Annotation
Structure probing data (2A3 and DMS) for a 177-nucleotide construct.
RNA sequence: GGGAACGACUCGAGUAGAGUCGAAAAACAAUCUACAUUCAAAUCUCGAAGAAUAUUCGAUCUAUGAUUUUUUUUCUCGAGACUGCAGGAUCAUCGACUUAAAGUUACUAAAAGAUCGGAGUAAUGGCAGCUCAGAUAUCUUCGGAUAUCUGAGCUGAAAAGAAACAACAACAACAAC
Reactivity to 2A3 in 0.01 (KOAc 150mM, MgCl2 10mM, bicine 150mM(pH8.5), 24C), signal-to-noise 4, nucleotides 027 to 126: a000c050a050a050u110c030u170a110c020a110u090u180c080a030a060a060u000c030u020c010g160a180a100g030a100a060u060a070u100u110c030g010a020u000c020u040a160u170g110a250u070u030u040u000u000u000u090u060c010u010c000g030a020g010a020c020u070g010c040a060g060g040a040u030c030a070u080c010g060a040c000u010u150a130a080a000g050u070u070a070c030u100a090a090a030a040g060a030u010c040g040g000a020g030u060a040a070u040g110g000
Reactivity to DMS in 0.01 (KOAc 150mM, MgCl2 10mM, bicine 150mM(pH8.5), 24C), signal-to-noise 1, nucleotides 027 to 126: a030c090a050a090u000c070u000a120c180a020u050u000c080a030a160a080u010c020u010c000g000a080a070g000a040a050u020a020u000u000c080g020a020u010c020u000a090u000g000a000u000u000u000u000u000u000u000u000c000u040c010g000a040g000a000c020u000g000c080a020g010g010a100u000c090a000u000c190g000a170c070u030u030a020a110a070g000u010u000a000c050u000a020a180a020a060g000a000u000c000g000g000a000g000u030a060a030u040g000g000
High DMS reactivity at an A or C suggests that its Watson-Crick edge is free. Conditions: 150 mM KOAc, 10 mM MgCl2 and 150 mM bicine (pH 8.5), 24 C. The DMS profile rests on 1,307 reads.